[RMDB]
RNA sequence: GGGAACGACUCGAGUAGAGUCGAAAAAAAAAUAUAGCGUACGAAGAUGGACGUACGCAACCAGUGCGUACAGGAAUCGCACAUCCAGCGCUCUAAGGAGAGCGCAAAUCCAAAUAAUAGAAAAAAAGAUUAUGUAUACGUUCGCGUAUACAUAAUCAAAAGAAACAACAACAACAAC
Reactivity to DMS in 0.01 (KOAc 150mM, MgCl2 10mM, bicine 150mM(pH8.5), 24C), signal-to-noise 1, nucleotides 027 to 126: a000a020a020a110a150u000a050u040a250g030c000g010u000a040c000g000a080a070g030a070u000g000g010a110c040g010u010a000c010g000c000a050a040c270c090a090g000u000g030c040g000u000a140c170a150g000g020a130a120u000c000g010c010a000c010a120u010c070c030a230g020c000g010c000u000c000u010a100a090g000g020a050g010a010g030c020g010c000a000a040a030u000c010c030a060a110a110u010a050a030u000a250g010a080a000a050a120a150a130a020
Reactivity to 2A3 in 0.01 (KOAc 150mM, MgCl2 10mM, bicine 150mM(pH8.5), 24C), signal-to-noise 1, nucleotides 027 to 126: a000a000a000a000a000u120a050u090a060g000c000g020u010a000c000g050a080a060g090a170u110g040g000a020c010g000u000a000c010g000c010a000a000c030c010a020g010u000g010c000g010u040a060c010a210g140g080a130a010u000c010g040c000a000c000a010u000c030c030a090g010c000g000c000u020c000u030a150a290g160g040a080g140a000g020c000g080c000a030a050a000u030c000c000a090a040a000u220a110a020u190a170g110a020a040a000a010a050a000a030
An RNA of 177 nucleotides, treated with DMS and 2A3 and read out base by base. Reactivities are given for positions 27 through 126. 2A3 adducts were read by reverse transcription with SuperScript II with manganese. The reactions ran in a buffer of 150 mM KOAc, 10 mM MgCl2 and 150 mM bicine (pH 8.5), at 24 C. For DMS the reverse transcriptase was MarathonRT.